[RMDB]
Annotation
This 207-nucleotide RNA was probed chemically with DMS and 2A3.
RNA sequence: GGGAACGACUCGAGUAGAGUCGAAAAAUACACCAGCAGUAGGACUCAGCGACCGUGACAACAAGGUUGUGCUGGUAUCCGACGGUCGUAUAGCCCUGUCUUGCAGGUUGCCUUGCACUGACGUGCCACACCAUUUACAGAUUCGUCUGUAAAUGAACUUUCUAUGAUCUUUCGAGAUCAUAGAAAGAAAAGAAACAACAACAACAAC
Reactivity to DMS in 0.01 (KOAc 150mM, MgCl2 10mM, bicine 150mM(pH8.5), 24C), signal-to-noise 3, nucleotides 027 to 156: a130u000a060c060a170c010c010a100g020c010a050g010u010a030g000g020a020c030u010c100a240g030c010g000a020c000c030g020u020g000a130c080a080a080c070a070a070g020g000u010u010g020u000g000c020u000g000g020u000a040u000c040c010g010a060c030g030g000u000c050g050u010a190u000a040g000c000c000c010u010g000u000c040u000u000g040c010a130g020g020u000u000g000c030c090u010u000g010c020a080c040u020g000a160c190g020u000g030c010c070a130c060a130c120c010a020u000u000u000a010c000a010g020a060u000u000c300g030u000c000u000g020u000a010a010a010u000g000a050a100
Reactivity to 2A3 in 0.01 (KOAc 150mM, MgCl2 10mM, bicine 150mM(pH8.5), 24C), signal-to-noise 6, nucleotides 027 to 156: a000u120a010c060a020c030c000a000g000c010a010g020u090a020g000g010a030c010u030c110a010g000c000g010a000c000c000g030u050g120a090c110a190a030c060a190a150g080g020u050u040g070u110g040c050u050g030g030u020a060u030c020c020g060a010c010g000g000u000c010g010u070a070u080a130g010c000c010c010u000g040u090c050u070u140g020c020a020g040g000u060u090g040c010c010u040u060g000c020a030c050u150g070a060c100g020u030g010c020c020a110c010a040c030c000a000u000u000u010a000c000a000g010a010u010u100c140g100u000c080u000g000u000a000a000a000u000g010a010a020